Notes:
An RNA of 177 nucleotides, treated with DMS and 2A3 and read out base by base.
RNA sequence: GGGAACGACUCGAGUAGAGUCGAAAAGAUAUGGACCGAGAUGGGAACUACAGGAUAGACUCGGAAACGAGUCUAAUCUGCCCAUCGUUUGACGUCCUAAGUCGCGCCCAUUACUUCGGUAAUGGAAUGGAACACAUUGAUUCGUCAAUGUGUUCCAAAAAGAAACAACAACAACAAC
Reactivity to DMS in 0.01 (KOAc 150mM, MgCl2 10mM, bicine 150mM(pH8.5), 24C), signal-to-noise 3, nucleotides 027 to 126: g010a020u000a100u010g000g010a020c020c180g010a040g000a020u000g000g000g010a100a020c050u030a280c070a020g010g000a060u010a000g000a000c000u000c000g000g000a010a010a060c000g000a010g010u000c000u000a000a000u000c010u000g010c010c000c000a020u000c010g020u000u000u010g000a180c290g000u000c010c000u000a000a100g000u000c010g010c290g000c120c000c000a020u000u000a010c000u000u010c200g010g000u000a010a010u000g000g000a100a130
Reactivity to 2A3 in 0.01 (KOAc 150mM, MgCl2 10mM, bicine 150mM(pH8.5), 24C), signal-to-noise 1, nucleotides 027 to 126: g000a010u000a010u050g020g000a000c000c100g140a080g000a290u030g000g000g030a100a070c200u260a080c300a030g010g010a010u000a000g000a000c000u000c000g000g020a000a020a010c000g010a000g000u040c000u000a000a040u000c000u010g000c000c000c000a010u010c010g000u080u150u210g080a060c090g000u030c010c000u030a010a010g010u000c010g000c010g010c000c000c000a000u020u000a010c010u030u040c270g160g020u010a010a020u050g000g120a080a210
For DMS, 2,420 sequencing reads were counted.